Description:
Structure probing data (2A3) for a 177-nucleotide construct.

RNA sequence: GGGAACGACUCGAGUAGAGUCGAAAAGCGCGGCAUCGUCGACCUGACCAUCCUGGGCGAUGAAGCCAAAGUCCGUCUGCGGGCAGCGGAACUCGGUGUGGACCUGGACGGCGCCACGGUAAUCGAGCCCGGAGAGUUUCUUCGGAAACUCUCCGGGAAAAGAAACAACAACAACAAC
Reactivity to 2A3 in 0.01 (KOAc 150mM, MgCl2 10mM, bicine 150mM(pH8.5), 24C), signal-to-noise 1, nucleotides 027 to 126: g150c090g000c010g000g000c130a050u010c000g000u010c000g130a300c000c000u100g190a300c060c040a000u090c000c000u060g000g040g030c030g000a020u060g190a210a100g010c000c080a070a050a000g010u050c000c000g010u010c010u000g030c120g030g030g010c000a080g000c060g030g030a110a080c000u150c020g160g060u100g000u020g210g080a200c050c050u140g010g000a020c060g000g110c070g000c000c000a020c020g080g000u020a120a060u030c040g000a040g000
Reactivities are given for positions 27 through 126.
For 2A3 the reverse transcriptase was SuperScript II with manganese.